Source information:
Chemical mapping of a 207-nucleotide RNA with 2A3. The RNA was probed in 150 mM KOAc, 10 mM MgCl2 and 150 mM bicine (pH 8.5) at 24 C.
RNA sequence: GGGAACGACUCGAGUAGAGUCGAAAAGACCAAUAACAGAAUGCACCACAGCGUAAAAUCAUCUGAUUGGGUGAGUUGGUCGCACCGCCAUAUGACGAACGAACGCCAAGCCUAAGCCGUCUUUGUGAACACGAGCUAGUCUUCGGACUAGCUCGAACUGAUCACCCAAGUUCGCUUGGGUGAUCAGAAAAGAAACAACAACAACAAC
Reactivity to 2A3 in 0.01 (KOAc 150mM, MgCl2 10mM, bicine 150mM(pH8.5), 24C), signal-to-noise 1, nucleotides 027 to 156: g010a030c000c030a020a050u150a040a020c010a010g110a200a070u120g030c050a020c020c060a040c040a010g040c020g030u110a100a150a000a000u070c010a020u050c030u070g080a280u100u230g010g000g000u020g000a040g050u000u060g050g010u000c030g020c030a010c000c060g080c000c010a100u110a060u100g060a060c040g020a140a000c000g000a030a010c040g020c010c010a030a000g000c020c030u090a070a050g020c000c000g000u000c000u050u050u020g100u010g070a080a020c080a020c030g000a000g000c020u000a000g000u000c010u020u030c170g030g010a000c000u000a000g000c000u000c000g010a000a000
Reactivities are rounded to 0.1 and cut off at 0 and 3.